[RMDB]
RNA sequence: GGGAACGACUCGAGUAGAGUCGAAAAGUGGCUGGCUGGAUUAUAGGCCACCGCCAAGUUUUGGCAAAGAAGAUGACAGUGGCAAUCGGGAAGAGAGCACAGAUAGUGAAUCAAAUAAAGGGACCGAUCUAGACUUCUUCUUCGGAAGAAGUCUAGAAAAAGAAACAACAACAACAAC
Reactivity to DMS in 0.01 (KOAc 150mM, MgCl2 10mM, bicine 150mM(pH8.5), 24C), signal-to-noise 2, nucleotides 027 to 126: g030u010g030g020c100u010g000g020c050u000g030g030a120u010u040a120u060a100g010g000c000c000a040c070c160g000c040c010a010a090g000u000u020u020u010g010g000c010a060a070a060g010a120a090g020a100u020g020a120c080a080g050u020g010g000c110a090a080u020c040g000g000g000a080a070g000a090g000a110g000c050a040c100a070g000a110u030a030g020u040g020a070a110u030c030a060a100a070u040a070a070a050g000g010g000a130c020c010g020a120
Reactivity to 2A3 in 0.01 (KOAc 150mM, MgCl2 10mM, bicine 150mM(pH8.5), 24C), signal-to-noise 3, nucleotides 027 to 126: g100u070g020g020c040u010g050g040c020u050g030g100a190u120u140a110u290a190g120g000c000c000a010c020c010g040c000c000a020a050g070u000u030u130u080g060g000c030a120a000a040g100a080a010g030a050u080g000a060c020a010g040u040g040g000c020a040a030u070c040g000g000g050a120a090g080a020g010a000g110c030a000c010a030g120a040u190a060g090u120g060a010a050u060c030a020a010a170u190a070a140a010g040g000g010a000c010c010g000a020
This 177-nucleotide RNA was probed chemically with DMS and 2A3. Reactivities are given for positions 27 through 126. The reactions ran in a buffer of 150 mM KOAc, 10 mM MgCl2 and 150 mM bicine (pH 8.5), at 24 C. The data come from the RNA Mapping Database (RMDB), library OK1LIB. DMS adducts were read by reverse transcription with MarathonRT.